[RMDB]
RNA sequence: GGGAACGACUCGAGUAGAGUCGAAAACCUCCUGCCUGGGCCUCCCAAAGCUAGGCACUAUUUUCUACCAUUCGUCCUCAUUUUGCAAUUGGGUGACUGAGGCUCAGAGAGCUGGAGGACCUUGCUCAAGGUUACAGAUCGUGUCAGUAAAGGCAAGCUUUAAAAGACCGUUCGCGGUCUUUUAAAGAAAAGAAACAACAACAACAAC
Reactivity to 2A3 in 0.01 (KOAc 150mM, MgCl2 10mM, bicine 150mM(pH8.5), 24C), signal-to-noise 3, nucleotides 027 to 156: c000c000u000c000c000u000g040c010c000u000g000g000g000c000c000u050c010c020c000a070a030a000g070c070u070a040g000g040c020a010c020u060a110u070u150u030u100c050u110a140c030c130a100u060u130c060g040u090c020c020u090c070a110u080u170u160u130g070c040a070a150u070u030g010g050g010u170g100a050c050u070g030a000g000g000c000u010c000a070g060a000g020a030g070c040u040g000g000a020g020g000a000c000c020u020u040g020c040u040c120a050a040g040g000u010u060a060c060a060g040a100u130c040g030u020g060u100c080a070g090u190a050a080a070g080g030c100a060a010g080
Reactivity to DMS in 0.01 (KOAc 150mM, MgCl2 10mM, bicine 150mM(pH8.5), 24C), signal-to-noise 1, nucleotides 027 to 156: c000c000u000c020c010u000g010c040c010u020g010g020g000c000c000u000c000c040c060a080a130a130g040c100u010a090g000g060c030a100c130u000a080u000u000u000u000c010u010a030c020c000a220u000u000c030g030u000c010c010u000c000a130u000u000u000u030g000c130a130a120u000u010g000g030g050u020g000a080c040u020g030a060g050g030c060u000c030a060g010a120g010a170g090c030u000g000g020a060g060g000a020c010c010u000u010g020c050u000c030a060a040g010g020u000u000a170c100a090g000a080u000c070g030u010g030u000c000a150g000u000a040a080a090g030g010c030a050a100g000
Description: The record gives the reactivity of an RNA of 207 nucleotides to 2A3 and DMS. Reactivities are given for positions 27 through 156.